[RMDB]
RNA sequence: GGGAACGACUCGAGUAGAGUCGAAAAUAAACAUCUGGUCGAAAUCAAUGCUGAUGAAAUCACCAUUACUCUAUCGCGUUAUACCUCUCCAGAAGCGCUAGAACGCAGUAUAACGGCUUUAGCGGCAACCAUGGGGUGAGUUCGCUCACCCCAUGGUAAAAGAAACAACAACAACAAC
Reactivity to DMS in 0.01 (KOAc 150mM, MgCl2 10mM, bicine 150mM(pH8.5), 24C), signal-to-noise 2, nucleotides 027 to 126: u000a090a080a140c120a090u010c050u000g020g000u000c040g020a060a020a100u020c150a030a060u010g000c150u000g010a060u000g010a060a110a230u010c030a060c050c060a100u000u000a100c010u000c010u000a060u010c030g000c020g010u000u010a060u010a070c070c040u000c040u000c050c140a060g000a140a130g020c030g020c060u000a060g000a030a100c000g000c080a140g030u020a050u000a070a100c050g020g050c040u000u000u000a000g010c040g000g000c140a120
Reactivity to 2A3 in 0.01 (KOAc 150mM, MgCl2 10mM, bicine 150mM(pH8.5), 24C), signal-to-noise 1, nucleotides 027 to 126: u040a010a080a010c020a140u080c050u110g110g010u030c070g050a010a000a110u080c060a010a060u240g090c070u090g040a060u070g040a100a030a000u050c040a020c060c030a020u030u080a120c050u040c040u060a040u060c020g010c000g040u000u010a040u020a060c020c000u050c010u000c090c030a010g020a220a050g080c000g000c000u050a030g020a110a030c020g000c100a010g030u090a080u040a120a040c030g110g000c010u020u000u030a000g040c000g070g010c030a040